Conditions: 150 mM KOAc, 10 mM MgCl2 and 150 mM bicine (pH 8.5), 24 C. Structure probing data (2A3 and DMS) for a 207-nucleotide construct. 2A3 adducts were read by reverse transcription with SuperScript II with manganese. For DMS the reverse transcriptase was MarathonRT.
RNA sequence: GGGAACGACUCGAGUAGAGUCGAAAAGGAGGACGAAGCAUAUUUCUGUUUCUGGAGGAUUAUUUAUAAUCUGCCAGAAAGUCUUGCAGGUGGCUGGGAUAUGUUCAGUCUGGUAGAAUUAAGCACGAAAACGUGUCCUUGUUCGCAAGGACACGAACAGGAUUGAACAGUUCGCUGUUCAAUCCUGAAAAGAAACAACAACAACAAC
Reactivity to 2A3 in 0.01 (KOAc 150mM, MgCl2 10mM, bicine 150mM(pH8.5), 24C), signal-to-noise 2, nucleotides 027 to 156: g030g020a030g010g000a010c030g040a080a000g000c000a000u030a050u090u060u040c040u100g140u050u040u030c000u000g000g000a030g030g010a000u020u000a010u020u170u030a030u020a010a000u000c010u060g060c000c000a000g000a000a010a020g010u000c030u070u120g050c060a030g030g080u040g050g000c010u020g040g020g000a020u030a020u120g110u140u100c070a000g010u000c010u020g010g040u050a020g100a100a030u130u120a040a000g040c090a020c130g060a050a060a060a030c010g010u000g000u000c000c010u010u000g030u040u080c090g000c100a000a000g000g010a000c000a000c000g000a000a000
Reactivity to DMS in 0.01 (KOAc 150mM, MgCl2 10mM, bicine 150mM(pH8.5), 24C), signal-to-noise 1, nucleotides 027 to 156: g030g000a180g000g010a030c030g020a110a140g000c010a100u010a020u000u000u000c010u010g020u020u000u000c010u000g030g010a030g000g000a020u000u010a020u010u010u020a080u020a090a030u000c030u000g000c010c000a000g000a020a030a090g020u010c050u000u010g020c090a100g020g080u000g020g020c030u000g020g000g020a060u000a020u000g000u010u000c040a220g030u010c010u000g010g010u000a060g020a120a110u010u000a060a090g060c060a110c090g020a090a050a080a130c020g030u000g010u020c010c000u000u010g030u010u040c300g020c000a040a000g000g020a020c000a000c000g010a020a080